[RMDB]
RNA sequence: GGGAACGACUCGAGUAGAGUCGAAAAAUCAUGUAUUCUUGGAUUCUUAUCGUGCUCUACAUUUUAAGGAUGCGGAUGAAGUUAAAUUCAGCAAACUAAACAUUCAUUUCCGAGAUGAAGAGGGAGUUGAUGCUGGCGGCGUUACGAGGGAAUGGUAUAAUUUAAUCCCUUUCGAGGGAUUAAAUUAAAAAGAAACAACAACAACAAC
Reactivity to 2A3 in 0.01 (KOAc 150mM, MgCl2 10mM, bicine 150mM(pH8.5), 24C), signal-to-noise 2, nucleotides 027 to 156: a000u060c090a060u090g080u200a090u210u110c040u110u070g070g040a020u070u040c040u080u210a190u110c030g050u020g080c000u010c040u050a010c040a130u110u130u110u090a090a080g010g000a020u050g090c090g020g000a020u040g060a040a000g020u030u190a050a090a280u140u110c040a030g000c050a110a040a040c040u140a070a050a000c030a060u020u020c000a020u050u120u010c000c090g010a020g000a060u080g030a020a020g000a050g070g030g000a060g020u050u110g030a060u040g020c020u000g010g000c040g010g020c000g030u020u090a020c050g020a060g020g030g010a010a020u020g030g000u110a030
Reactivity to DMS in 0.01 (KOAc 150mM, MgCl2 10mM, bicine 150mM(pH8.5), 24C), signal-to-noise 1, nucleotides 027 to 156: a060u010c040a050u010g020u000a080u010u000c060u030u000g040g010a060u010u000c010u000u000a090u000c030g000u010g000c030u000c020u050a040c030a080u000u000u020u000a080a150g010g010a080u010g020c090g020g010a080u000g010a070a100g010u000u010a030a050a140u000u010c060a090g020c040a090a050a050c060u000a060a070a070c020a130u000u000c050a080u000u010u010c100c040g020a140g000a070u010g000a030a040g010a130g030g010g000a100g020u000u010g020a130u010g000c040u000g040g050c090g020g030c080g000u020u020a040c030g010a100g000g000g000a030a060u020g030g000u000a150